[RMDB]
RNA sequence: GGGAACGACUCGAGUAGAGUCGAAAAAUAGUCUGACUAAUGGUGAUCUGCUUACUUACUCGUCUUACGAUAGAACGCUCGAUAAGAUGAGGGAUAAAGAACGCGAUCUCCAGUCCACUUACGAUCUAACUGGCGCAAUGCAUAGGAUUGUAUUGACUCUCUACCACGUGUUCGCACGUGGUAGAGAAAAAGAAACAACAACAACAAC
Reactivity to 2A3 in 0.01 (KOAc 150mM, MgCl2 10mM, bicine 150mM(pH8.5), 24C), signal-to-noise 2, nucleotides 027 to 156: a000u170a020g100u000c150u180g030a060c030u040a180a040u120g020g000u000g000a010u070c160u190g040c000u160u000a140c000u070u080a000c000u010c000g000u000c000u000u000a000c000g000a000u060a140g300a280a100c130g000c050u000c000g160a200u000a010a000g000a000u000g000a000g000g000g080a100u130a300a060a000g000a000a010c060g000c000g000a010u000c010u050c000c000a010g000u000c000c010a050c000u000u060a010c020g050a020u000c020u040a000a090c100u210g060g080c020g040c140a250a240u270g040c010a070u090a050g040g050a020u010u020g000u010a020u000u080g010a060c030